[RMDB]
RNA sequence: GGGAACGACUCGAGUAGAGUCGAAAAGAAAGGCAGCCAGUGCAGCCCACGGAGCCAUUCGAAGCAUGCUUUUGCAUGCCGCCCACGACUGAGGGCAGCUGCGGCACUGAGGGCAGCUGCCGAAAGACGAUGGUAAUCAGUUCGCUGAUUACCAUCGAAAAGAAACAACAACAACAAC
Reactivity to DMS in 0.01 (KOAc 150mM, MgCl2 10mM, bicine 150mM(pH8.5), 24C), signal-to-noise 4, nucleotides 027 to 126: g000a070a080a120g010g030c010a030g020c000c080a130g020u000g010c140a140g000c020c010c030a100c060g000g000a110g010c010c010a110u000u010c100g000a140a110g010c000a010u000g000c010u000u000u000u000g010c010a010u000g010c020c080g000c020c000c010a110c170g000a120c180u000g000a120g000g000g010c000a050g000c070u000g010c160g020g010c050a080c050u010g010a080g030g000g020c010a050g000c010u000g000c000c000g000a050a080a080g000a180
Reactivity to 2A3 in 0.01 (KOAc 150mM, MgCl2 10mM, bicine 150mM(pH8.5), 24C), signal-to-noise 4, nucleotides 027 to 126: g070a020a050a010g000g010c020a010g040c060c060a060g080u080g150c080a060g040c020c020c020a020c040g010g020a010g000c010c020a090u100u160c080g080a050a010g000c010a010u020g000c020u120u210u300u300g000c020a000u000g000c020c010g010c000c010c010a070c040g300a090c120u170g090a140g010g050g000c010a000g010c040u120g040c050g040g000c030a010c060u040g020a100g020g050g010c000a000g000c000u010g000c000c000g000a000a000a000g050a020
This 177-nucleotide RNA was probed chemically with DMS and 2A3. Source: RMDB library OK2TRN, as collected in RNAgym. For 2A3, 6,138 sequencing reads were counted. DMS adducts were read by reverse transcription with MarathonRT.